[RMDB]
RNA sequence: GGGAACGACUCGAGUAGAGUCGAAAAGCAGAAAAUUGGUCAUGGAGCCACUUAUGGCCACUUAAUCUAAGGAUCUUCAUGGAAUUUCACAAUUGCUGUCUACAAAAAGGCUUCAUCAGAUUUAAUAACUAACGUAUGCGUUCGCGCAUACGUUAGUAAAAGAAACAACAACAACAAC
Reactivity to DMS in 0.01 (KOAc 150mM, MgCl2 10mM, bicine 150mM(pH8.5), 24C), signal-to-noise 1, nucleotides 027 to 126: g030c080a030g000a020a050a050a050u000u010g000g010u000c010a020u000g000g000a050g010c070c050a110c080u020u020a040u000g030g000c040c010a040c240u000u010a040a130u020c110u000a020a020g000g000a110u000c030u000u010c030a110u000g010g000a150a050u000u000u000c060a070c130a030a070u000u010g030c050u000g000u000c010u000a070c040a070a040a090a090a120g000g020c030u010u000c070a070u000c070a100g010a060u010u010u000a060a070u010a110
Reactivity to 2A3 in 0.01 (KOAc 150mM, MgCl2 10mM, bicine 150mM(pH8.5), 24C), signal-to-noise 1, nucleotides 027 to 126: g070c010a000g080a130a140a000a040u030u030g020g010u030c030a040u060g020g010a050g030c030c030a010c050u150u080a030u190g040g040c020c010a010c010u100u050a030a070u110c050u130a080a060g070g000a010u000c000u050u020c000a010u070g000g100a060a110u060u140u090c050a000c020a040a090u040u080g060c010u040g000u110c030u120a110c090a010a110a000a020a030g030g000c120u070u070c030a060u070c050a030g040a070u140u090u110a210a200u140a110
The record gives the reactivity of an RNA of 177 nucleotides to DMS and 2A3. For DMS, 749 sequencing reads were counted. For 2A3 the reverse transcriptase was SuperScript II with manganese. For 2A3, 775 sequencing reads were counted. The RNA was probed in 150 mM KOAc, 10 mM MgCl2 and 150 mM bicine (pH 8.5) at 24 C. For DMS the reverse transcriptase was MarathonRT. Reactivities are given for positions 27 through 126.